[RMDB]
RNA sequence: GGGAACGACUCGAGUAGAGUCGAAAAGAUAUGGAUCCCUGACCCGAAUCAAACCACUGAUGACCACUUUGAGAUCGGAAACGAUCUCAAAGUGCAAGGUGGUUUGAUUCGCAGGGAUCCUAAGUCACAUAAUCGUUAUGUUCGCAUAACGAUUAUGAAAAGAAACAACAACAACAAC
Reactivity to 2A3 in 0.01 (KOAc 150mM, MgCl2 10mM, bicine 150mM(pH8.5), 24C), signal-to-noise 2, nucleotides 027 to 126: g020a020u080a030u150g010g000a010u000c030c000c000u040g160a240c070c060c070g000a000a000u000c000a000a000a020c010c000a020c020u070g090a300u170g050a300c050c030a010c020u010u000u000g010a010g010a000u010c010g000g000a080a070a040c010g010a000u010c010u000c010a000a000a000g000u000g000c010a010a060g010g000u000g000g000u000u000u000g000a000u000u000c000g030c010a000g020g000g000a000u000c000c000u000a000a000g000u000c000a010
Reactivity to DMS in 0.01 (KOAc 150mM, MgCl2 10mM, bicine 150mM(pH8.5), 24C), signal-to-noise 4, nucleotides 027 to 126: g010a050u000a300u000g010g000a000u010c000c000c000u000g000a190c300c250c080g000a010a010u000c010a000a000a010c000c000a020c000u010g010a100u020g010a160c300c000a010c000u000u000u000g010a010g020a010u000c000g010g000a120a080a240c010g000a010u000c000u000c000a000a000a000g000u000g010c020a040a070g000g040u000g010g010u000u000u000g000a010u000u000c000g030c010a010g000g010g000a000u000c000c000u000a010a040g000u010c040a240